[RMDB]
RNA sequence: GGGAACGACUCGAGUAGAGUCGAAAAAUCGAGGAUCCUGUCUAUCGAUCAUGGAUCUCUCGGAUCGAUCCAGACAGGUACGAGACUAGUCAUGCAGAUACAGCAUGAUCGAUCCAGAGUACCUAGCGAACUGAUUGGUAUUCGUACCAAUCAGUUCAAAAGAAACAACAACAACAAC
Reactivity to 2A3 in 0.01 (KOAc 150mM, MgCl2 10mM, bicine 150mM(pH8.5), 24C), signal-to-noise 5, nucleotides 027 to 126: a000u050c010g000a010g040g000a040u050c020c000u000g040u000c040u090a290u140c080g060a040u080c030a140u230g080g030a070u030c110u030c020u010c100g000g000a020u030c030g020a020u020c030c030a020g040a090c050a030g000g020u010a010c040g010a030g010a100c020u040a040g030u010c000a000u010g000c010a010g070a300u150a270c120a070g010c000a000u010g000a010u040c030g030a070u000c010c020a020g020a010g140u030a030c000c010u020a030g070c040
Reactivity to DMS in 0.01 (KOAc 150mM, MgCl2 10mM, bicine 150mM(pH8.5), 24C), signal-to-noise 6, nucleotides 027 to 126: a040u000c000g000a140g010g000a080u000c020c030u000g000u000c020u010a130u000c140g010a020u010c050a080u010g020g010a080u010c090u010c040u000c030g000g020a010u000c040g020a070u010c080c100a080g010a120c090a000g000g000u000a040c010g020a210g000a040c060u010a080g000u000c000a010u000g000c000a100g020a180u010a120c300a120g010c000a010u000g010a000u000c060g020a060u000c030c050a170g000a230g000u000a060c040c010u000a070g010c200